[RMDB]
RNA sequence: GGGAACGACUCGAGUAGAGUCGAAAAGUGCGAGGUCGAGUGUAGCUUACGAUCUUUGCAGUGUUUCAUGAGACCUAUAUCCAUGAAGCACUAGGUCUCAUACGUAGGACAAAGAUACCUCGCUGAAGAUACUGAAUCAUUUCGAUGGUUCAGUAUCAAAAGAAACAACAACAACAAC
Reactivity to DMS in 0.01 (KOAc 150mM, MgCl2 10mM, bicine 150mM(pH8.5), 24C), signal-to-noise 9, nucleotides 027 to 126: g010u030g000c000g010a010g010g010u000c080g010a180g010u010g020u030a120g020c050u010u010a040c040g010a080u010c070u000u010u020g010c110a080g010u010g000u010u010u010c060a010u000g000a110g000a030c100c110u030a010u050a260u020c030c030a050u010g000a050a060g000c060a030c060u000a030g010g010u020c030u010c070a050u010a080c050g000u000a030g000g010a090c020a040a090a050g000a100u020a030c000c000u000c010g000c010u010g000a110a100
Reactivity to 2A3 in 0.01 (KOAc 150mM, MgCl2 10mM, bicine 150mM(pH8.5), 24C), signal-to-noise 9, nucleotides 027 to 126: g120u060g000c000g000a000g000g010u030c020g020a100g030u010g020u080a030g040c000u020u020a010c010g040a070u020c000u050u040u080g050c030a020g010u010g020u010u030u030c020a000u000g020a020g010a150c040c080u080a020u030a010u090c010c000a020u030g040a030a000g000c010a000c010u000a030g010g060u030c020u010c040a030u050a050c020g010u010a010g020g020a020c010a000a060a000g020a000u030a020c000c000u000c000g000c000u000g000a030a010